[RMDB]
RNA sequence: GGGAACGACUCGAGUAGAGUCGAAAAGAGCAGGCUGUCCCAAGUCAGGGUGGAGGGGGCGGCAUCACUGAGCUCUCGGCGCCAUGGUGGCAGUAUGAGCUAUGGCGGCAGUGGAGAGCAGGCAGCCCAAGCCCUUAUUGUUCGCAAUAAGGGCUUGAAAAGAAACAACAACAACAAC
Reactivity to 2A3 in 0.01 (KOAc 150mM, MgCl2 10mM, bicine 150mM(pH8.5), 24C), signal-to-noise 2, nucleotides 027 to 126: g050a020g090c110a000g090g000c000u030g010u070c010c010c020a030a020g080u090c060a020g000g040g050u180g020g070a220g090g020g010g000g060c000g010g000c020a020u070c020a010c020u050g010a010g020c000u000c000u000c020g040g040c000g000c000c000a000u020g010g020u090g120g070c070a030g150u290a210u240g080a010g000c020u000a020u000g010g000c000g040g020c050a010g090u160g130g040a020g010a000g000c000a000g000g000c010a000g010c020c000
Reactivity to DMS in 0.01 (KOAc 150mM, MgCl2 10mM, bicine 150mM(pH8.5), 24C), signal-to-noise 3, nucleotides 027 to 126: g010a120g020c080a150g000g000c010u000g000u010c010c010c070a110a120g000u010c070a110g000g000g040u000g030g020a170g000g000g010g010g020c030g000g010c070a020u000c090a140c120u000g010a110g020c000u000c010u000c040g000g000c000g020c010c000a010u000g000g010u010g020g010c100a150g000u010a050u010g010a300g000c010u010a020u000g000g000c000g020g030c030a070g010u000g020g010a010g010a020g030c010a050g000g010c040a040g000c040c010